[RMDB]
RNA sequence: GGGAACGACUCGAGUAGAGUCGAAAAGGUGCGAAUCACUGUUUGGUCUAAUCCUAGACAUUCUGUGUUCUGUGAGGCAUUCUCAUAAUUGGAAGGCGCGCUAGGAUCAGGUACCUUGCGCCUGUUAAGUGUCUGGUGCAUUCGUGCAUCAGGCGCUAAAAGAAACAACAACAACAAC
Reactivity to DMS in 0.01 (KOAc 150mM, MgCl2 10mM, bicine 150mM(pH8.5), 24C), signal-to-noise 3, nucleotides 027 to 126: g000g010u000g000c040g010a110a060u020c060a060c050u030g010u000u010u020g000g000u000c030u000a080a050u020c040c050u000a040g020a060c070a100u000u000c050u020g020u010g010u010u020c110u010g020u010g000a060g000g010c080a040u010u010c010u000c000a000u000a000a010u010u000g000g000a010a000g000g000c010g000c040g000c100u000a030g000g000a100u020c110a280g000g000u130a230c050c000u000u000g000c080g000c000c000u000g000u040u070a300
Reactivity to 2A3 in 0.01 (KOAc 150mM, MgCl2 10mM, bicine 150mM(pH8.5), 24C), signal-to-noise 4, nucleotides 027 to 126: g030g000u020g010c020g030a050a030u100c010a000c030u160g030u040u020u060g060g000u000c000u020a010a040u030c010c020u010a010g010a020c000a020u030u030c030u080g040u000g050u080u010c040u040g060u030g050a040g010g080c050a100u150u020c010u010c000a040u050a130a080u050u020g050g030a040a010g020g030c030g010c010g010c110u030a010g000g020a040u060c070a030g200g000u160a070c000c000u000u030g000c000g000c000c000u020g020u030u220a080
Structure probing data (DMS and 2A3) for a 177-nucleotide construct. For 2A3, 12,457 sequencing reads were counted. The reactions ran in a buffer of 150 mM KOAc, 10 mM MgCl2 and 150 mM bicine (pH 8.5), at 24 C. For DMS the reverse transcriptase was MarathonRT. Reactivities are rounded to 0.1 and cut off at 0 and 3.